[RMDB]
RNA sequence: GGGAACGACUCGAGUAGAGUCGAAAACUACUUACUUUGGAAUGUUCACCGUUUUGAAGGUACAAGUGGAAUUAUUUUUUAGGAAUCUGCGAAAUACAAAAGCGGUGGGGCGGGUUCUUCGAAAUCGUGCCCUCAUUAAUUUCGAUUAAUGAGGGCAAAAAGAAACAACAACAACAAC
Reactivity to 2A3 in 0.01 (KOAc 150mM, MgCl2 10mM, bicine 150mM(pH8.5), 24C), signal-to-noise 1, nucleotides 027 to 126: c070u070a000c010u170u090a060c030u060u030u070g060g060a050a070u060g040u020u160c080a060c020c030g000u020u070u000u000g050a060a000g110g000u000a030c050a080a000g000u000g000g080a000a000u070u010a160u050u080u000u000u060u040a110g060g080a020a050u010c000u000g020c060g070a130a000a000u060a000c000a020a200a000a000g000c000g010g000u010g030g000g000g000c060g010g110g000u030u060c010u070u070c110g010a050a030a150u160c150g010
Reactivity to DMS in 0.01 (KOAc 150mM, MgCl2 10mM, bicine 150mM(pH8.5), 24C), signal-to-noise 2, nucleotides 027 to 126: c040u010a000c060u050u030a060c070u000u020u020g000g020a070a020u010g020u030u000c060a010c120c000g010u020u000u000u010g000a080a070g030g050u030a040c110a060a300g000u000g020g020a070a050u000u020a070u000u000u000u060u010u080a090g000g030a120a070u010c000u000g000c050g020a110a150a150u000a030c030a080a010a060a010g030c110g010g070u000g040g000g000g020c040g020g000g000u000u010c040u010u000c060g000a030a070a030u000c090g000